Conditions: 150 mM KOAc, 10 mM MgCl2 and 150 mM bicine (pH 8.5), 24 C.
This 177-nucleotide RNA was probed chemically with DMS and 2A3.
As a SHAPE reagent, 2A3 marks flexible, mostly unpaired nucleotides at the ribose 2'-OH.
For 2A3, 10,714 sequencing reads were counted.

RNA sequence: GGGAACGACUCGAGUAGAGUCGAAAAGAUAUGGAGUGCCUAAGCUAGUCGUCCAUUCGGAAACGAAUGGGCGACUUGGACCUUAGGGCACUCCUAAGUCAAACCCUCGGCCUUCGGGCCGAGGGAACGUAAUACCGUUGUUCGCAACGGUAUUACGAAAAGAAACAACAACAACAAC
Reactivity to DMS in 0.01 (KOAc 150mM, MgCl2 10mM, bicine 150mM(pH8.5), 24C), signal-to-noise 4, nucleotides 027 to 126: g000a040u010a300u000g010g010a020g020u000g020c000c010u010a040a040g000c040u000a020g010u000c000g020u000c010c000a010u000u000c000g000g000a120a100a250c020g010a020a010u000g000g000g000c000g020a000c000u000u000g020g000a130c300c030u000u000a060g030g010g000c000a000c010u000c000c000u000a000a060g010u000c040a140a130a180c000c000c000u000c010g010g010c010c000u000u010c240g040g000g020c010c010g000a000g010g010g000a000a010
Reactivity to 2A3 in 0.01 (KOAc 150mM, MgCl2 10mM, bicine 150mM(pH8.5), 24C), signal-to-noise 3, nucleotides 027 to 126: g000a010u050a050u190g010g010a000g010u000g010c010c010u010a020a010g050c030u040a030g010u020c010g000u010c000c000a010u020u000c010g030g030a070a050a070c020g000a000a000u010g000g000g000c010g000a000c000u000u000g000g020a030c010c000u020u050a120g130g000g010c000a000c000u000c000c010u010a030a010g020u020c040a080a040a300c000c000c000u030c010g010g000c020c000u080u240c300g120g000g030c010c010g000a000g000g000g000a010a000